Notes
Structure probing data (DMS and 2A3) for a 207-nucleotide construct. Values cover nucleotides 27 to 156. The DMS profile rests on 2,930 reads. For 2A3 the reverse transcriptase was SuperScript II with manganese. The RNA was probed in 150 mM KOAc, 10 mM MgCl2 and 150 mM bicine (pH 8.5) at 24 C.
RNA sequence: GGGAACGACUCGAGUAGAGUCGAAAAAAGUCUAAAGCACGGGCCCUUACACGUGCUACAAGUUGGAAUCACCUGAGGCAUUUAAAAUGCAUUAUGGGCUGGGUCCAAACCCACAGCUUCUGAUUUAAUUGGUCUGGGAUGUGUGACCCGAGCAUCCCUAACGGUUCAUAUUCGUAUGAACCGUUAGAAAAGAAACAACAACAACAAC
Reactivity to DMS in 0.01 (KOAc 150mM, MgCl2 10mM, bicine 150mM(pH8.5), 24C), signal-to-noise 2, nucleotides 027 to 156: a070a140g020u010c050u020a080a100a050g000c000a040c030g020g000g040c050c090c090u000u000a130c050a100c030g000u030g000c000u000a110c100a030a200g030u000u000g020g010a120a150u000c030a040c020c020u000g010a070g010g000c000a040u000u010u000a050a070a100a040u010g010c000a050u000u000a060u010g010g000g020c060u000g020g020g000u000c020c180a050a070a180c040c000c010a070c060a070g000c050u000u000c040u020g000a140u000u020u000a110a150u000u010g010g020u000c060u010g000g020g000a010u010g010u010g000u000g010a110c010c020c000g000a190g040c020a060u000c040c010
Reactivity to 2A3 in 0.01 (KOAc 150mM, MgCl2 10mM, bicine 150mM(pH8.5), 24C), signal-to-noise 2, nucleotides 027 to 156: a000a000g120u110c100u100a230a100a000g050c030a000c010g090g040g030c020c020c030u040u110a120c180a040c000g000u000g030c030u010a000c020a070a060g010u050u040g050g100a110a010u140c040a100c050c030u040g030a040g050g110c000a000u000u100u300a090a170a020a020u060g030c010a000u000u160a040u160g000g080g000c030u010g010g020g080u070c050c030a070a090a140c050c030c010a100c010a040g040c040u190u150c030u180g130a140u050u000u220a090a100u070u100g110g010u030c100u060g000g030g000a070u030g020u010g050u100g090a020c000c000c000g000a000g000c030a010u000c020c000